[RMDB]
RNA sequence: GGGAACGACUCGAGUAGAGUCGAAAAAGCUGUUUCGACAGCUGUGCGGGGGGUCCCACAUCGAUCUUGUCAGAUCUACACUGAAGCCUCCACGGUGUAUGAUCUUGGAUUUAGGGAGUGGGACGGAGGCACCCUUAAACCUCAAUUCGUUGAGGAAUUGCUUAGUAGUAUUCGUACUACUAAGCAAAAAAGAAACAACAACAACAAC
Reactivity to DMS in 0.01 (KOAc 150mM, MgCl2 10mM, bicine 150mM(pH8.5), 24C), signal-to-noise 2, nucleotides 027 to 156: a030g030c010u010g010u010u000u010c160g020a100c020a010g010c020u000g010u000g010c080g000g000g010g040g060g000u000c010c000c000a030c020a140u000c110g000a040u010c040u020u000g030u000c140a060g050a040u000c010u000a010c000a020c010u010g000a040a120g000c030c020u000c000c010a300c040g010g030u000g020u010a020u010g000a010u010c020u000u000g060g020a110u000u000u000a170g000g030g020a140g050u010g000g010g020a010c020g010g010a050g040g000c000a090c020c000c020u000u010a040a100a110c000c000u000c000a030a140u020u000c230g020u000u000g010a040g010g020a040a090
Reactivity to 2A3 in 0.01 (KOAc 150mM, MgCl2 10mM, bicine 150mM(pH8.5), 24C), signal-to-noise 2, nucleotides 027 to 156: a000g020c050u030g020u040u080u090c130g130a030c000a000g000c000u040g180u170g110c280g040g020g000g010g040g030u000c000c040c000a010c010a120u080c050g160a020u020c070u070u220g120u280c040a020g020a000u040c000u000a000c000a000c000u020g040a080a000g010c000c000u040c020c000a030c000g020g000u010g000u030a060u300g000a000u000c000u030u120g160g020a070u000u030u240a030g080g000g030a110g030u010g000g000g000a000c000g010g000a000g000g000c000a000c020c000c000u070u170a070a070a040c000c000u010c000a030a040u100u100c210g090u080u040g000a000g010g000a030a070
The data come from the RNA Mapping Database (RMDB), library RNAMAK. Chemical mapping of a 207-nucleotide RNA with DMS and 2A3. DMS adducts were read by reverse transcription with MarathonRT. As a SHAPE reagent, 2A3 marks flexible, mostly unpaired nucleotides at the ribose 2'-OH.